[RMDB]
This 177-nucleotide RNA was probed chemically with 2A3 and DMS.
The RNA was probed in 150 mM KOAc, 10 mM MgCl2 and 150 mM bicine (pH 8.5) at 24 C.
Source: RMDB library OK1LIB, as collected in RNAgym.
RNA sequence: GGGAACGACUCGAGUAGAGUCGAAAACUGGUGAGCGGCCUGUUUGACGGCAUCCCCGCCCCACGCCAGCCACUUGACGCCCACAACCCGCGCACGGAUGUGGUUAUCACGGGCCGCCGCGCCCCACGUGGAGAGUAAGAUUCGUCUUACUCUCCACAAAAGAAACAACAACAACAAC
Reactivity to 2A3 in 0.01 (KOAc 150mM, MgCl2 10mM, bicine 150mM(pH8.5), 24C), signal-to-noise 7, nucleotides 027 to 126: c070u130g060g010u040g040a080g020c000g000g010c000c010u040g040u040u040u100g060a040c040g060g000c000a020u020c000c000c000c010g020c000c010c000c000a030c030g020c010c010a050g020c010c000a050c030u030u090g040a040c040g020c010c020c010a050c020a020a060c010c010c010g040c020g030c050a050c050g020g010a020u030g030u050g090g110u050u040a090u100c060a010c020g000g000g000c010c000g000c000c000g010c010g010c000c000c010c000a080c100
Reactivity to DMS in 0.01 (KOAc 150mM, MgCl2 10mM, bicine 150mM(pH8.5), 24C), signal-to-noise 3, nucleotides 027 to 126: c080u000g010g000u000g000a180g030c010g000g010c020c010u030g010u000u030u010g010a060c050g000g000c020a050u010c000c000c110c050g000c020c000c060c030a070c090g010c020c050a140g010c020c050a020c070u000u020g000a110c100g000c030c000c020a070c060a070a050c060c030c020g010c120g010c100a090c130g010g010a070u000g010u010g000g000u000u000a040u010c130a050c010g020g000g000c000c020g030c090c000g000c040g000c000c010c010c010a070c160